[RMDB]
Source information:
Chemical mapping of a 207-nucleotide RNA with 2A3. Conditions: 150 mM KOAc, 10 mM MgCl2 and 150 mM bicine (pH 8.5), 24 C. The 2A3 profile rests on 932 reads. For 2A3 the reverse transcriptase was SuperScript II with manganese.
RNA sequence: GGGAACGACUCGAGUAGAGUCGAAAACAGACAAACUUCGGUUUGUCUGAAAAAAACCUUUGUGCUAAGACAUGCUCUACCCUGGCCCAUUGGGCCAUCUGGGUGCGAGCAACAGCUUAGCACUCUGGUAAAAAACACUGCAGUUCGCUGCAGUGAACACCUAAAUUGGCUUCGGCCAAUUUAGGUGAAAAGAAACAACAACAACAAC
Reactivity to 2A3 in 0.01 (KOAc 150mM, MgCl2 10mM, bicine 150mM(pH8.5), 24C), signal-to-noise 1, nucleotides 027 to 156: c010a000g000a000c000a000a000a010c000u090u110c240g140g010u040u000u000g000u020c000u000g000a070a000a010a000a000a000a000c000c000u000u060u000g000u000g000c000u000a000a000g050a080c010a120u020g000c000u000c000u010a010c000c020c020u000g000g000c000c020c050a270u120u300g040g000g000c010c010a110u060c100u090g000g000g010u000g010c170g000a000g010c000a000a000c000a000g020c000u010u000a000g000c000a000c000u000c000u010g050g000u160a190a150a000a000a010a000c000a000c010u010g000c000a010g050u060u170c180g040c180u000g010c020a030g000u000g000a040a020